Notes: The record gives the reactivity of an RNA of 207 nucleotides to 2A3. The 2A3 profile rests on 686 reads. Conditions: 150 mM KOAc, 10 mM MgCl2 and 150 mM bicine (pH 8.5), 24 C.
[RMDB]
RNA sequence: GGGAACGACUCGAGUAGAGUCGAAAACUGCAAUAUGGCUUUUCCUGUACUGUGCUUGGAUUAAAUUAGCCUUUUGAAAUUCAAAACAGAGCAUUAGUUAUUUGCUGGACCUAUAUGUAUGUAAAAAACAAAUAGCAACAACAAAAAUAAUUGAUGACCGUAGUCUCUAAUUCGUUAGAGACUACGGAAAAGAAACAACAACAACAAC
Reactivity to 2A3 in 0.01 (KOAc 150mM, MgCl2 10mM, bicine 150mM(pH8.5), 24C), signal-to-noise 2, nucleotides 027 to 156: c010u080g020c050a080a130u150a090u240g060g050c040u000u040u060u000c000c000u000g000u000a010c010u050g020u040g230c010u000u030g030g000a030u050u080a040a070a130u060u030a140g010c030c000u050u050u010u120g100a120a160a140u150u190c020a010a000a120a160c080a050g060a040g060c010a000u000u030a000g050u000u050a050u030u020u060g130c230u000g030g000a020c010c000u040a050u020a020u090g000u000a080u080g090u080a110a070a000a100a020a020c060a030a070a010u070a000g020c020a000a040c000a000a000c030a000a070a110a000a010u100a040a010u060u040g010a020u070g020a060